[RMDB]
RNA sequence: GGGAACGACUCGAGUAGAGUCGAAAAAGCGUAGAACUAGGCUAUAUGUUCAGAACAAAAUGUCUGAAGAUAAUUGAGAGGCUCAUCAAUGAUCCAUCUUCUCAUGAGUCGGAUAAGAAGCUGUUCCGACGUGUAUCCGAUUCGUCGGAUACACGUCAAAAGAAACAACAACAACAAC
Reactivity to 2A3 in 0.01 (KOAc 150mM, MgCl2 10mM, bicine 150mM(pH8.5), 24C), signal-to-noise 6, nucleotides 027 to 126: a000g060c080g050u120a050g030a130a070c050u090a070g060g030c020u030a030u000a010u140g160u010u020c030a010g050a080a000c030a080a150a110a060u270g040u010c020u020g020a010a010g020a100u090a060a120u110u060g040a040g010a030g060g000c010u020c040a130u080c030a080a220u230g010a020u030c050c000a060u000c020u110u030c020u010c000a030u070g000a000g040u010c010g000g030a030u110a090a040g130a060a010g020c030u010g030u040u030c010c020
Reactivity to DMS in 0.01 (KOAc 150mM, MgCl2 10mM, bicine 150mM(pH8.5), 24C), signal-to-noise 3, nucleotides 027 to 126: a020g020c050g030u010a050g000a170a070c060u060a110g010g010c010u020a170u010a020u010g000u000u000c040a010g030a010a010c100a070a090a190a100u030g000u000c000u010g000a030a000g000a010u000a010a050u000u010g020a030g000a050g000g000c140u020c030a090u010c130a120a120u010g000a040u030c020c040a160u010c020u020u020c000u000c040a040u030g000a100g040u010c010g000g000a110u030a100a070g010a080a110g020c020u000g000u000u000c010c050